The record gives the reactivity of an RNA of 177 nucleotides to 2A3 and DMS. The data come from the RNA Mapping Database (RMDB), library RFM100. The DMS profile rests on 1,160 reads. DMS adducts were read by reverse transcription with MarathonRT.

RNA sequence: GGGAACGACUCGAGUAGAGUCGAAAAGAAAGAAAGAAAGAAUCACCCCCGCCUGACACGGGCGACAGCUGCGGCCUGCUGUGUUCACUCUGGCCAAGUCCAUCUCCUGUCAGGCAAGGGAGAGCAAGACCGUGAUUAGGUUCGCCUAAUCACGGUCAAAAGAAACAACAACAACAAC
Reactivity to 2A3 in 0.01 (KOAc 150mM, MgCl2 10mM, bicine 150mM(pH8.5), 24C), signal-to-noise 2, nucleotides 027 to 126: g100a010a040a020g050a050a080a020g010a000a110a000g100a030a060u100c030a130c000c080c020c000c020g000c020c000u000g000a040c000a040c050g020g000g000c040g010a000c030a020g000c020u070g080c100g090g000c020c010u040g120c090u050g000u010g040u240u090c110a080c030u000c010u040g000g000c000c000a010a030g000u050c070c000a060u030c000u000c010c020u010g000u000c000a050g010g000c000a000a000g000g000g020a070g010a000g030c070a140a000
Reactivity to DMS in 0.01 (KOAc 150mM, MgCl2 10mM, bicine 150mM(pH8.5), 24C), signal-to-noise 1, nucleotides 027 to 126: g040a080a130a110g000a070a030a070g000a180a120a070g020a120a200u000c070a040c020c020c000c050c050g000c000c000u010g000a000c000a000c160g030g000g000c160g000a020c250a090g000c000u030g000c270g000g030c000c000u000g000c300u000g000u000g020u090u000c130a050c120u040c090u030g000g070c030c000a060a100g020u000c070c000a300u000c000u000c010c000u000g030u010c000a030g000g000c010a080a070g000g000g000a030g000a090g040c100a050a040